This 177-nucleotide RNA was probed chemically with 2A3 and DMS. For 2A3, 753 sequencing reads were counted.
[RMDB]
RNA sequence: GGGAACGACUCGAGUAGAGUCGAAAAGAACGGAAGCGUCGGCCUCCCACGGUGACGGACAAGGACAGGGCCAGGCAUCGUAAGCGAUACUUCAAGGCUCGCUUCGACAACCCUGACUACAAAGCGCUGUUGGCACACGAUUCGUCGUGUGCCAACAAAAAGAAACAACAACAACAAC
Reactivity to 2A3 in 0.01 (KOAc 150mM, MgCl2 10mM, bicine 150mM(pH8.5), 24C), signal-to-noise 2, nucleotides 027 to 126: g110a050a000c090g010g060a150a000g000c000g080u050c050g120g050c000c010u120c000c000c000a000c100g020g000u020g000a010c030g030g010a000c050a000a090g010g000a000c000a000g110g000g000c060c000a050g000g090c070a130u000c010g120u300a000a010g010c000g000a030u020a080c040u090u260c300a110a000g090g020c000u000c000g010c000u000u000c010g030a040c020a000a170c000c000c000u000g000a010c020u190a130c020a030a010a040g000c030g030c070
Reactivity to DMS in 0.01 (KOAc 150mM, MgCl2 10mM, bicine 150mM(pH8.5), 24C), signal-to-noise 1, nucleotides 027 to 126: g000a040a140c100g000g020a000a040g010c150g000u000c000g000g060c000c050u000c000c070c000a050c210g000g050u000g000a140c200g000g000a150c210a090a030g090g000a090c030a050g000g000g000c000c160a160g020g000c300a110u010c000g020u060a000a000g060c000g000a080u000a000c020u000u000c300a020a030g030g010c140u000c020g000c000u010u000c000g020a000c000a050a130c020c000c000u000g010a270c140u100a150c230a050a150a060g000c080g000c020

For DMS the reverse transcriptase was MarathonRT. For DMS, 1,050 sequencing reads were counted.